[RMDB]
RNA sequence: GGGAACGACUCGAGUAGAGUCGAAAAGAAAGAAAGCCGAAGCAGCCAAAGAGGUCAAACGUCAGUAUAUCGGGCGUAAAUACUACAUUAUGCAGAAAGCCGACCUUAAUGUCGUAAAGAAAGAAAAAUAAUCCUAUAUGUUCGCAUAUAGGAUUAUAAAAGAAACAACAACAACAAC
Reactivity to 2A3 in 0.01 (KOAc 150mM, MgCl2 10mM, bicine 150mM(pH8.5), 24C), signal-to-noise 5, nucleotides 027 to 126: g100a010a070a010g050a060a070a000g020c030c010g020a040a010g040c010a020g040c010c060a060a070a050g060a070g040g020u060c050a080a050a000c030g030u040c040a030g050u060a110u040a050u300c060g000g010g000c010g010u020a020a080a070u060a020c010u000a000c000a060u030u110a040u120g070c050a040g050a080a040a010g040c020c030g040a060c020c000u020u100a050a030u080g010u030c030g000u070a040a020a070g080a060a050a000g140a020a140a040a000
Reactivity to DMS in 0.01 (KOAc 150mM, MgCl2 10mM, bicine 150mM(pH8.5), 24C), signal-to-noise 5, nucleotides 027 to 126: g010a090a060a160g010a070a150a120g010c060c010g000a120a080g020c050a040g020c060c080a050a090a160g000a100g000g020u010c080a070a100a080c040g000u010c020a040g020u020a140u030a090u020c040g010g000g010c030g020u010a050a060a060u020a060c060u000a030c070a050u020u020a040u020g030c040a060g000a110a100a110g010c060c030g020a070c070c040u010u020a030a050u010g000u010c050g010u010a030a070a090g020a050a060a070g020a020a060a040a050
Notes:
The record gives the reactivity of an RNA of 177 nucleotides to 2A3 and DMS. For 2A3, 3,879 sequencing reads were counted. The reactions ran in a buffer of 150 mM KOAc, 10 mM MgCl2 and 150 mM bicine (pH 8.5), at 24 C. It was measured as part of the RMDB library OK1LIB. For 2A3 the reverse transcriptase was SuperScript II with manganese. For DMS the reverse transcriptase was MarathonRT.